[RMDB]
RNA sequence: GGGAACGACUCGAGUAGAGUCGAAAACAUCAUAUUUGAUUAGCUUUCAGGCUGUUGACUGGAGGUGUAUGCACGCAAGCUUCCGGAACUCAUUUAGAAAAACCCUCGGAAGAUUUAUCUUUCGGGGCAUGGUUCAGCAUUUCGAUGCUGAACCAUGAAAAGAAACAACAACAACAAC
Reactivity to DMS in 0.01 (KOAc 150mM, MgCl2 10mM, bicine 150mM(pH8.5), 24C), signal-to-noise 1, nucleotides 027 to 126: c040a030u010c090a060u020a050u040u040u040g010a020u010u050a040g000c000u010u000u030c090a040g010g060c020u000g010u000u000g050a210c000u060g000g000a050g000g020u000g000u010a020u000g010c000a000c180g000c040a020a300g000c010u000u000c060c040g020g000a110a090c110u000c080a040u030u010u010a110g000a110a110a160a030a080c100c010c000u000c000g000g030a010a010g060a020u000u040u000a010u000c000u000u000u000c000g010g000g010g010
Reactivity to 2A3 in 0.01 (KOAc 150mM, MgCl2 10mM, bicine 150mM(pH8.5), 24C), signal-to-noise 2, nucleotides 027 to 126: c030a030u140c040a010u090a280u300u140u150g070a150u100u200a030g050c020u010u130u100c060a080g050g000c040u030g020u160u060g080a060c030u080g000g000a010g050g000u040g040u050a040u070g030c020a000c100g040c020a040a020g000c000u030u000c020c000g010g030a000a010c020u020c040a080u160u170u300a030g080a040a010a030a030a070c020c010c000u020c000g010g000a000a000g000a000u100u220u140a150u070c010u000u000u000c000g000g000g020g000

This 177-nucleotide RNA was probed chemically with DMS and 2A3.
The 2A3 profile rests on 916 reads.
Source: RMDB library RFM100, as collected in RNAgym.